[RMDB]
RNA sequence: GGGAACGACUCGAGUAGAGUCGAAAAUUGUAUUGACGUGGCGAAUGGUUAUUCCGAACACUUCGUGCAGUUCGUUGCGAAAGCGCGUGAAGCGUGGCCGACCAAAACCAUUUGUGCUGGUAACGUACAUGGCAUGUGCUUUCGAGCACAUGCCAUGAAAAGAAACAACAACAACAAC
Reactivity to 2A3 in 0.01 (KOAc 150mM, MgCl2 10mM, bicine 150mM(pH8.5), 24C), signal-to-noise 1, nucleotides 027 to 126: u050u050g040u050a110u040u150g090a010c040g060u090g040g000c060g000a030a010u090g000g090u220u060a170u270u120c050c020g000a010a000c040a000c020u070u120c140g000u060g000c000a020g060u020u050c010g040u180u150g040c030g060a020a010a030g060c020g000c010g000u160g200a140a010g000c010g000u000g000g050c030c060g150a120c010c050a050a110a010a010c030c000a040u010u000u070g100u080g060c000u060g120g000u020a000a100c050g020u020a050
Reactivity to DMS in 0.01 (KOAc 150mM, MgCl2 10mM, bicine 150mM(pH8.5), 24C), signal-to-noise 2, nucleotides 027 to 126: u000u000g020u000a030u020u020g030a080c120g000u000g000g050c030g000a030a020u000g000g020u000u000a130u010u010c070c040g020a150a070c040a090c030u000u020c080g000u000g020c050a080g020u000u000c030g010u000u020g010c070g020a020a130a110g080c020g040c020g010u010g010a040a050g030c000g000u000g000g020c250c040g000a110c170c150a090a010a050a080c060c030a060u010u000u000g010u000g050c040u000g000g020u010a050a090c090g000u010a090
An RNA of 177 nucleotides, treated with 2A3 and DMS and read out base by base. For DMS, 1,485 sequencing reads were counted. It was measured as part of the RMDB library OK2TST. Conditions: 150 mM KOAc, 10 mM MgCl2 and 150 mM bicine (pH 8.5), 24 C.